[RMDB]
Structure probing data (2A3 and DMS) for a 177-nucleotide construct.
For 2A3, 1,628 sequencing reads were counted.
For DMS, 1,031 sequencing reads were counted.
The reactions ran in a buffer of 150 mM KOAc, 10 mM MgCl2 and 150 mM bicine (pH 8.5), at 24 C.
The data come from the RNA Mapping Database (RMDB), library TTRDEL.
2A3 adducts were read by reverse transcription with SuperScript II with manganese.
RNA sequence: GGGAACGACUCGAGUAGAGUCGAAAAGAUAUGGAGUGCUCGCGAUAAGAAGAAUCAUCGGAAACGAUGAUACCUUCUUUUGACGCGAGGCUCCUAAGUCAAACGUAGCCCGUUCGCGGGCUACGAACUCUAGAUGUUCGUUCGCGAACAUCUAGAGAAAAGAAACAACAACAACAAC
Reactivity to 2A3 in 0.01 (KOAc 150mM, MgCl2 10mM, bicine 150mM(pH8.5), 24C), signal-to-noise 1, nucleotides 027 to 126: g030a020u070a030u130g000g020a000g030u200g300c020u000c010g000c000g070a100u050a210a030g010a010a000g020a050a000u030c010a000u000c000g070g000a150a050a040c000g000a000u000g000a000u060a080c020c000u050u030c020u040u120u060u130g120a030c020g030c010g010a000g000g010c030u000c000c010u000a090a030g030u000c010a120a000a060c020g000u000a010g010c000c010c000g060u040u030c300g020c030g130g070g090c010u010a010c000g000a020a000
Reactivity to DMS in 0.01 (KOAc 150mM, MgCl2 10mM, bicine 150mM(pH8.5), 24C), signal-to-noise 1, nucleotides 027 to 126: g000a020u000a300u010g000g010a000g040u000g020c010u000c010g010c000g020a140u030a020a040g010a060a000g000a230a040u000c000a010u030c000g000g010a130a080a270c000g020a000u000g020a010u000a020c110c040u000u000c000u000u000u000u010g020a060c060g000c010g010a000g020g010c020u000c000c000u010a010a080g000u000c020a160a150a300c010g000u000a000g020c000c020c000g040u010u040c180g010c000g000g030g000c000u000a000c000g000a010a150